[RMDB]
RNA sequence: GGGAACGACUCGAGUAGAGUCGAAAAUUAGUGUUUCGACACUAACACUCCUAAGUCGACGCUAGAGCGAGUACAGGGAGCUAUAUCGGAAACGAUAUAGCGAAGAACUGUACCGCUCUUGGACCGUCGAUAUGGACACUCAGGCCUUCGGGCCUGAUUCAAACGUUAGGUUCGCCUAACGUUUGAAAAAAGAAACAACAACAACAAC
Reactivity to 2A3 in 0.01 (KOAc 150mM, MgCl2 10mM, bicine 150mM(pH8.5), 24C), signal-to-noise 3, nucleotides 027 to 156: u040u010a010g000u010g050u050u110u070c260g110a010c010a000c010u020a020a020c020a080c050u070c000c000u040a140a100g030u000c000g000a000c000g010c040u020a000g000a000g010c020g040a080g040u000a010c010a010g030g000g000a020g000c000u000a000u000a000u010c030g010g050a090a070a040c000g010a000u000a000u000a010g010c000g010a040a010g020a030a000c010u000g000u000a000c000c000g000c000u000c000u000u020g000g020a070c080c080g010u000c000g000a000u020a060u040g040g010a020c030a030c130u030c010a010g000g000c010c000u150u290c300g060g000g000c000c000u030g000a000
Reactivity to DMS in 0.01 (KOAc 150mM, MgCl2 10mM, bicine 150mM(pH8.5), 24C), signal-to-noise 2, nucleotides 027 to 156: u000u000a000g010u000g030u000u000u000c180g020a240c030a030c010u000a000a030c060a160c090u000c000c000u000a100a240g010u000c000g030a020c020g050c030u000a050g000a040g000c010g000a220g050u000a000c010a020g020g000g000a300g000c000u000a010u000a000u000c020g040g000a190a120a300c010g040a000u000a010u000a000g010c010g030a060a120g000a060a170c000u000g000u000a010c010c020g010c020u000c000u010u030g040g000a050c210c030g010u000c010g010a050u000a050u000g000g000a030c040a080c130u000c000a010g010g040c000c030u020u000c300g000g020g050c000c000u000g020a000